[RMDB]
RNA sequence: GGGAACGACUCGAGUAGAGUCGAAAAGAGAGACCGGACCCGACAGUGAGGGACGAAAGCCAGGGUCUCGAACCGGAUUAGAUACCCGGGUAGUCCUGGCUGUAAACAAUGCUCGCUAGGUAUGUCAACAGGUCAGGCAUUUCGAUGCCUGACCUGUAAAAGAAACAACAACAACAAC
Reactivity to DMS in 0.01 (KOAc 150mM, MgCl2 10mM, bicine 150mM(pH8.5), 24C), signal-to-noise 1, nucleotides 027 to 126: g010a130g070a040g060a110c030c010g030g000a140c050c070c040g040a260c060a040g000u090g000a050g000g000g000a050c080g000a200a030a050g040c000c000a010g000g000g000u100c020u000c060g000a050a300c000c000g000g000a030u000u000a290g000a170u300a100c030c020c000g000g000g000u040a230g000u000c000c000u000g000g050c010u000g000u030a030a000a030c160a100a170u020g010c030u010c000g000c000u000a080g000g000u000a020u020g000u000c120a040